Structure probing data (DMS and 2A3) for a 177-nucleotide construct. Reactivities are given for positions 27 through 126. Conditions: 150 mM KOAc, 10 mM MgCl2 and 150 mM bicine (pH 8.5), 24 C.
RNA sequence: GGGAACGACUCGAGUAGAGUCGAAAAGGGGUCGCCCAGGAAUGGCGGGACCCCACUCCACUGGGGUCCGCGCUCCAUCCUUUCUUACCUGAUGGCCGGCAUGGUCCCAGCCUCCUCGCUGGCGCCGCACUUAAAAACUGUUCGCAGUUUUUAAGUGAAAAGAAACAACAACAACAAC
Reactivity to DMS in 0.01 (KOAc 150mM, MgCl2 10mM, bicine 150mM(pH8.5), 24C), signal-to-noise 4, nucleotides 027 to 126: g010g000g010g040u000c060g000c040c010c070a060g000g020a090a080u000g010g020c060g020g010g010a010c000c000c000c010a010c120u010c070c120a060c130u000g020g000g000g010u000c010c010g020c030g010c040u010c100c050a060u000c020c030u000u010u010c070u010u000a130c090c040u000g010a110u000g010g010c050c050g010g010c050a090u010g010g010u000c160c010c010a080g020c030c030u010c050c030u010c080g000c020u000g010g010c100g020c050c060g010
Reactivity to 2A3 in 0.01 (KOAc 150mM, MgCl2 10mM, bicine 150mM(pH8.5), 24C), signal-to-noise 2, nucleotides 027 to 126: g030g000g000g010u040c030g030c010c000c030a010g020g030a170a100u050g060g000c040g000g000g010a020c000c000c040c000a010c000u050c020c010a050c110u010g000g030g000g020u020c000c060g100c090g010c080u010c010c000a020u020c010c000u110u130u120c030u110u080a130c000c050u040g080a130u100g110g000c090c030g000g000c030a070u130g000g000u060c010c000c010a010g020c010c040u050c020c000u020c040g060c010u010g020g000c030g010c020c030g050